[RMDB]
RNA sequence: GGGAACGACUCGAGUAGAGUCGAAAACACACAUCGCGUGCACGUCGGUACGCAGCGCAGCCAACAGUUGGUCCUCGAUAUCCAAUUCACGGCUGCGUUCUAGCACCGCGGCUGCGGCAGGUGCCGAGCACCUUCUCCCAUUCGUGGGAGAAGGUGCAAAAGAAACAACAACAACAAC
Reactivity to DMS in 0.01 (KOAc 150mM, MgCl2 10mM, bicine 150mM(pH8.5), 24C), signal-to-noise 2, nucleotides 027 to 126: c060a210c110a060c030a020u000c040g010c000g000u000g060c010a120c120g030u000c020g010g040u010a030c230g040c140a130g000c040g000c000a010g010c000c040a140a300c300a000g010u000u000g000g000u030c110c090u000c210g000a140u000a060u000c000c000a010a000u000u000c130a020c300g000g000c000u000g010c000g000u000u000c000u020a130g000c020a020c000c000g000c030g020g040c050u000g000c010g010g020c120a010g000g000u000g000c010c040g000a250
Reactivity to 2A3 in 0.01 (KOAc 150mM, MgCl2 10mM, bicine 150mM(pH8.5), 24C), signal-to-noise 1, nucleotides 027 to 126: c060a030c020a000c000a060u050c050g000c040g060u070g000c040a070c300g210u250c040g090g020u070a020c060g000c000a010g000c000g000c000a000g000c000c020a040a010c030a040g010u010u000g010g020u020c040c040u140c090g140a150u030a050u200c000c000a000a020u040u030c040a000c020g000g000c000u000g000c000g000u010u000c010u000a000g020c000a010c000c000g020c010g020g010c040u110g000c000g030g000c030a050g140g020u030g030c020c020g040a060